[RMDB]
Source information:
Source: RMDB library OK1LIB, as collected in RNAgym. An RNA of 177 nucleotides, treated with 2A3 and read out base by base. The reactions ran in a buffer of 150 mM KOAc, 10 mM MgCl2 and 150 mM bicine (pH 8.5), at 24 C.
RNA sequence: GGGAACGACUCGAGUAGAGUCGAAAAACUUUGUGCCCCUCAUCAGCGGGAAGGACAUCCAGACACUGCUGGGCACAUUCAACAAGGUGGCUGCCAACCACAAGAUGCAGUUGCUCCAGCAGACUGACGACUAUCGGAGCUUCGGCUCCGAUAGUCGAAAAGAAACAACAACAACAAC
Reactivity to 2A3 in 0.01 (KOAc 150mM, MgCl2 10mM, bicine 150mM(pH8.5), 24C), signal-to-noise 1, nucleotides 027 to 126: a000c090u030u110u090g160u250g150c020c030c000c030u080c000a180u000c000a030g060c100g000g090g000a000a080g000g010a030c000a050u000c030c030a050g100a180c110a040c140u000g090c000u000g060g000g020c020a100c100a000u140u160c060a040a080c050a160a000g050g000u000g000g060c030u150g080c080c000a160a000c040c040a000c000a000a000g030a110u220g000c000a000g000u050u030g140c000u100c000c040a030g000c020a030g050a040c000u000g000a000